[RMDB]
RNA sequence: GGGAACGACUCGAGUAGAGUCGAAAAGGACCCAGCUUCGGCUGGGUCCAAAGAGAUAGUACCUAUUGAGUUCCUGUGUAGGUACUCAUGACAGGAUGUCUAAAAGUAUGGACUUCGGUCCAUACAAGCUAUUAGGUACGUUCGCGUACCUAAUAGCAAAAGAAACAACAACAACAAC
Reactivity to 2A3 in 0.01 (KOAc 150mM, MgCl2 10mM, bicine 150mM(pH8.5), 24C), signal-to-noise 2, nucleotides 027 to 126: g000g000a030c000c010c000a010g020c030u040u060c200g140g000c000u000g030g030g000u010c000c000a000a010a010g010a000g000a030u050a060g010u030a060c000c020u040a040u060u090g050a040g010u040u040c010c010u050g040u070g060u190a020g010g000u010a000c000u000c000a050u070g060a000c010a050g110g080a160u180g010u060c020u090a010a100a070a110g010u010a010u000g000g020a000c000u040u020c190g050g000u000c000c000a010u000a000c010a010a010
Reactivity to DMS in 0.01 (KOAc 150mM, MgCl2 10mM, bicine 150mM(pH8.5), 24C), signal-to-noise 3, nucleotides 027 to 126: g040g020a030c000c010c000a000g030c010u000u010c190g040g030c010u000g030g000g010u000c000c000a000a040a110g000a100g000a080u010a030g010u010a060c000c000u000a040u000u000g000a080g000u000u000c000c000u000g010u010g010u020a010g000g020u000a000c010u000c080a030u000g000a070c240a100g000g010a160u020g000u000c000u000a090a090a100a160g010u000a000u000g010g010a020c000u010u000c140g030g020u000c000c000a000u000a000c000a030a100

The data come from the RNA Mapping Database (RMDB), library M2PK50. Structure probing data (2A3 and DMS) for a 177-nucleotide construct. Conditions: 150 mM KOAc, 10 mM MgCl2 and 150 mM bicine (pH 8.5), 24 C.